RNA sequence: GGGAACGACUCGAGUAGAGUCGAAAACUAAACAGGGUUUUCACCCUUCCUUUAGUUUCCUUCCUCUCCUGGAGAGGUCUUCUGCCCUAGCCCGGUCUUCGAAGCUUCCUCUGGCUACUACCCGGUGGACACAUUAGAUCUUCGGAUCUAAUGUGUCAAAAGAAACAACAACAACAAC
Reactivity to 2A3 in 0.01 (KOAc 150mM, MgCl2 10mM, bicine 150mM(pH8.5), 24C), signal-to-noise 1, nucleotides 027 to 126: c020u010a000a020a040c300a220g040g000g000u160u120u220u290c120a030c000c000c000u010u070c000c000u000u000u000a000g020u020u010u040c000c000u030u110c010c010u020c020u000c010c120u090g010g080a070g000a020g010g000u010c000u110u000c010u020g040c020c000c010u020a040g020c020c020c020g030g010u050c030u070u050c060g040a030a010g000c000u040u040c000c030u060c000u030g000g010c040u100a060c020u030a030c080c010c020g090g070u070g180
Reactivity to DMS in 0.01 (KOAc 150mM, MgCl2 10mM, bicine 150mM(pH8.5), 24C), signal-to-noise 2, nucleotides 027 to 126: c000u000a000a010a020c220a020g010g000g010u010u000u010u010c230a080c020c000c000u000u010c020c020u010u010u000a010g000u000u010u010c050c050u000u000c010c010u000c050u000c010c110u020g010g010a040g010a040g020g010u010c020u010u010c060u010g010c030c030c020u000a140g010c060c040c070g030g010u000c020u000u000c050g010a080a180g000c040u000u000c050c000u030c030u010g010g000c040u020a060c100u000a120c020c010c030g000g010u010g000
Source information: Conditions: 150 mM KOAc, 10 mM MgCl2 and 150 mM bicine (pH 8.5), 24 C. Chemical mapping of a 177-nucleotide RNA with 2A3 and DMS. 2A3 adducts were read by reverse transcription with SuperScript II with manganese. For 2A3, 1,244 sequencing reads were counted. Source: RMDB library VIROID, as collected in RNAgym. Reactivities are given for positions 27 through 126.